[RMDB]
RNA sequence: GGGAACGACUCGAGUAGAGUCGAAAAGAUAUGGAGUAAGGGCUGAUGGAGUCCGAUGUGGACUAUUAAUUCGGAAACGAAUUAACGAAUCCACUAGGACUAUGAAGUCAGCCCUUACUCCUAAGUCGAUACGCAUAACCUUCGGGUUAUGCGUAUCAAAAGAAACAACAACAACAAC
Reactivity to DMS in 0.01 (KOAc 150mM, MgCl2 10mM, bicine 150mM(pH8.5), 24C), signal-to-noise 2, nucleotides 027 to 126: g010a010u000a300u000g000g000a000g000u010a010a000g010g020g000c000u010g040a020u010g000g000a000g000u010c010c010g000a170u020g030u000g030g010a020c090u020a260u010u000a000a000u000u000c000g030g030a180a170a300c000g020a000a000u000u000a000a000c110g000a140a140u000c000c010a000c020u010a300g000g010a000c010u010a230u030g030a150a170g000u010c000a010g030c000c010c000u000u000a000c000u000c000c000u000a000a050g010u010c100
Description
An RNA of 177 nucleotides, treated with DMS and read out base by base. The DMS profile rests on 1,099 reads. For DMS the reverse transcriptase was MarathonRT. Reactivities are given for positions 27 through 126. The RNA was probed in 150 mM KOAc, 10 mM MgCl2 and 150 mM bicine (pH 8.5) at 24 C. In probing experiments dimethyl sulfate is read out at A N1 and C N3, which are open when not base-paired.